[RMDB]
RNA sequence: GGGAACGACUCGAGUAGAGUCGAAAAACACCAAAACUGAAAACGGAAGGCAAUCCUUCCACGACGAUACUUACUUUCCUUUGAUCCUCGUUACUACUGGCAUAGCCACAAAGGAGAACAAACAUGAGCGCGGACACUGACUUCGGUCAGUGUCCAACCGACUAGAACUGUUCGCAGUUCUAGUCGGAAAAGAAACAACAACAACAAC
Reactivity to 2A3 in 0.01 (KOAc 150mM, MgCl2 10mM, bicine 150mM(pH8.5), 24C), signal-to-noise 2, nucleotides 027 to 156: a020c060a100c030c080a070a100a050a000c150u190g040a030a100a000a090c060g000g000a000a020g030g000c060a040a160u300c000c000u000u000c000c000a010c010g060a000c000g040a050u040a200c020u080u020a040c040u080u210u070c000c000u050u010u090g030a060u090c020c030u070c070g080u100u090a070c060u010a000c020u040g040g000c020a230u060a100g060c000c000a050c010a030a050a010g020g020a010g000a070a010c080a110a040a030c040a130u230g060a090g140c170g000c090g050g000a000c000a000c000u000g000a000c000u010u020c080g030g030u010c000a000g000u000g020u000c000c000a000a000
Chemical mapping of a 207-nucleotide RNA with 2A3.
2A3 adducts were read by reverse transcription with SuperScript II with manganese.
The reactions ran in a buffer of 150 mM KOAc, 10 mM MgCl2 and 150 mM bicine (pH 8.5), at 24 C.
2A3 is a SHAPE reagent: it acylates the 2'-hydroxyl of flexible nucleotides of all four kinds.